[RMDB]
RNA sequence: GGGAACGACUCGAGUAGAGUCGAAAAAUCAAAUUCUAAUGAUUUAGUGGGUAAAUCAUCAAUGCGGGUAUUGUCUAAUAGCCAGAAUUUUGUCAAGCGCGCCCGCAGACAGUACACUACGCGGCAGAAUCACGUAGCAGUUCGCUGCUACGUGAUUAAAAGAAACAACAACAACAAC
Reactivity to DMS in 0.01 (KOAc 150mM, MgCl2 10mM, bicine 150mM(pH8.5), 24C), signal-to-noise 2, nucleotides 027 to 126: a060u020c080a050a010a060u000u000c060u020a130a060u010g010a030u000u000u000a050g000u000g040g010g020u000a050a060a000u000c030a030u040c190a080a060u010g010c000g000g000g000u000a070u010u020g000u000c040u010a080a070u050a110g000c100c120a050g020a030a010u020u010u030u060g000u000c110a110a150g000c080g030c060g000c200c000c020g080c030a040g010a030c030a000g010u000a000c030a080c120u030a060c080g000c020g000g000c090a100g000
Reactivity to 2A3 in 0.01 (KOAc 150mM, MgCl2 10mM, bicine 150mM(pH8.5), 24C), signal-to-noise 3, nucleotides 027 to 126: a000u150c050a030a030a030u300u060c080u130a150a050u100g030a040u020u010u080a110g010u140g100g000g000u080a080a100a000u040c030a000u020c050a050a150u110g000c020g010g010g000u060a100u100u120g020u040c030u080a060a080u020a160g120c060c020a040g090a140a130u070u100u110u120g200u140c090a080a000g020c020g000c010g000c070c000c000g000c000a010g000a000c000a010g060u020a020c120a000c030u090a010c030g030c000g040g000c040a010g060

An RNA of 177 nucleotides, treated with DMS and 2A3 and read out base by base. The DMS profile rests on 1,927 reads. 2A3 adducts were read by reverse transcription with SuperScript II with manganese. The reactions ran in a buffer of 150 mM KOAc, 10 mM MgCl2 and 150 mM bicine (pH 8.5), at 24 C. The data come from the RNA Mapping Database (RMDB), library OK1LIB.